RNA sequence: GGGAACGACUCGAGUAGAGUCGAAAAGAAAACCGCAGUUGGCUAGCAGAAAGAAAGAGGCUUAAAGCCAACGAAAUAAGUCGGAAAGCACGACCGACAAGAAAAGCCCUACAAUCGUGCAAGAAAAAUACCAUGAGUGAUUCGUCACUCAUGGUAUAAAAGAAACAACAACAACAAC
Reactivity to 2A3 in 0.01 (KOAc 150mM, MgCl2 10mM, bicine 150mM(pH8.5), 24C), signal-to-noise 5, nucleotides 027 to 126: g050a020a060a000a000c060c060g090c080a040g000u000u000g010g000c010u030a010g010c040a030g100a190a250a020g170a070a140a000g140a140g080g000c000u070u100a080a030a000g000c000c000a010a010c000g000a010a000a020u230a080a010g000u000c000g000g000a110a180a050g010c010a000c000g020a010c000c000g020a000c010a030a000g100a030a120a020a020g020c000c000c000u040a050c090a030a020u040c000g000u000g000c000a010a010g050a010a110a000a000
Reactivity to DMS in 0.01 (KOAc 150mM, MgCl2 10mM, bicine 150mM(pH8.5), 24C), signal-to-noise 5, nucleotides 027 to 126: g000a120a060a110a130c080c110g000c220a100g010u000u000g000g000c000u010a050g020c070a090g020a100a120a150g010a050a180a120g000a160g010g000c010u000u010a030a050a030g000c010c000a000a010c010g000a080a090a050u040a090a080g010u000c000g020g010a110a050a080g010c000a000c010g010a030c000c000g000a010c010a080a100g010a050a060a080a080g000c000c000c010u020a120c220a050a070u010c010g030u010g010c000a180a120g010a000a020a060a110